The record gives the reactivity of an RNA of 177 nucleotides to DMS and 2A3. 2A3 adducts were read by reverse transcription with SuperScript II with manganese. The reactions ran in a buffer of 150 mM KOAc, 10 mM MgCl2 and 150 mM bicine (pH 8.5), at 24 C. The 2A3 profile rests on 3,555 reads.

[RMDB]
RNA sequence: GGGAACGACUCGAGUAGAGUCGAAAAGAUAAUGUCUUCGGACAUUAUCCACGCCUAAAGGCUUUAAUAAAUUAGCUAAGCCUGCUAAUUAAAAUGGCAUUAACAACUGUCCAUUCGUGGACAGUAACGUCAUAUUAUGCUUCGGCAUAAUAUGACGAAAAGAAACAACAACAACAAC
Reactivity to DMS in 0.01 (KOAc 150mM, MgCl2 10mM, bicine 150mM(pH8.5), 24C), signal-to-noise 2, nucleotides 027 to 126: g000a000u010a000a000u010g000u010c000u010u000c160g040g000a010c000a000u000u000a010u000c000c020a080c270g010c010c000u000a020a100a110g020g010c000u010u010u010a050a090u000a070a050a050u000u010a040g010c010u000a040a120g010c110c060u000g000c030u000a020a040u000u010a020a080a130a140u010g010g020c050a100u020u010a080a070c190a080a080c000u000g010u000c000c010a040u000u010c210g040u000g010g000a020c010a000g000u000a020a090
Reactivity to 2A3 in 0.01 (KOAc 150mM, MgCl2 10mM, bicine 150mM(pH8.5), 24C), signal-to-noise 3, nucleotides 027 to 126: g000a010u010a010a000u000g000u000c010u020u060c250g070g000a000c000a000u000u010a000u010c010c000a030c020g050c000c000u090a150a100a040g080g000c000u170u110u080a110a090u130a060a180a070u080u050a050g000c020u080a110a040g110c020c040u000g030c020u030a020a050u130u070a050a070a080a080u110g050g000c020a040u120u140a060a040c060a050a010c020u000g000u000c000c010a030u020u050c170g110u030g020g000a000c000a000g010u000a010a040